[RMDB]
Source: RMDB library M2RFPK, as collected in RNAgym. An RNA of 207 nucleotides, treated with 2A3 and DMS and read out base by base. The 2A3 profile rests on 4,554 reads. Values cover nucleotides 27 to 156. DMS adducts were read by reverse transcription with MarathonRT. Conditions: 150 mM KOAc, 10 mM MgCl2 and 150 mM bicine (pH 8.5), 24 C.

RNA sequence: GGGAACGACUCGAGUAGAGUCGAAAAGAUAAGCUAGCAGCAAAAAGGAACCGAUUCCCACCAAGUUCGGAAAGAGAUACCAGGCGAGGCGCUGAAGAAAGAAUCUCGCUUCAGACACCCCAAGGACAUGACCUUAAAAUGUUCGCAUUUUAAGGAACAAUGGAUAAUUGUUCGCAAUUAUCCAUUGAAAAGAAACAACAACAACAAC
Reactivity to 2A3 in 0.01 (KOAc 150mM, MgCl2 10mM, bicine 150mM(pH8.5), 24C), signal-to-noise 4, nucleotides 027 to 156: g020a050u130a070a060g020c040u080a000g020c050a010g020c030a030a000a060a080a080g070g020a050a010c050c020g050a100u060u040c010c010c010a020c010c040a070a050g040u070u070c010g030g040a090a060a000g060a010g000a010u060a090c020c020a010g010g010c020g020a030g000g010c070g000c090u060g020a040a020g030a050a240a020g040a080a100u030c050u030c080g030c000u010u020c010a040g030a060c010a070c040c020c010c020a020a030g020g000a020c040a100u140g070a050c000c000u000u000a000a000a000a000u010g010u040u070c140g000c090a000u000u010u000u000a000a000g000g000a030a030
Reactivity to DMS in 0.01 (KOAc 150mM, MgCl2 10mM, bicine 150mM(pH8.5), 24C), signal-to-noise 3, nucleotides 027 to 156: g020a150u010a050a090g020c030u000a070g020c050a090g000c030a030a080a100a120a090g000g000a100a120c040c050g000a200u000u010c000c010c000a150c060c030a110a170g020u000u000c020g000g010a070a060a070g010a090g000a130u000a060c020c020a110g020g000c040g010a060g020g020c140g000c030u000g000a050a070g000a080a090a110g010a050a060u000c040u010c050g000c050u000u000c010a040g000a280c040a040c000c000c000c010a060a130g000g010a070c060a070u000g010a110c000c010u000u010a000a010a020a020u000g020u000u000c280g030c010a010u020u000u000u010a010a000g020g010a100a090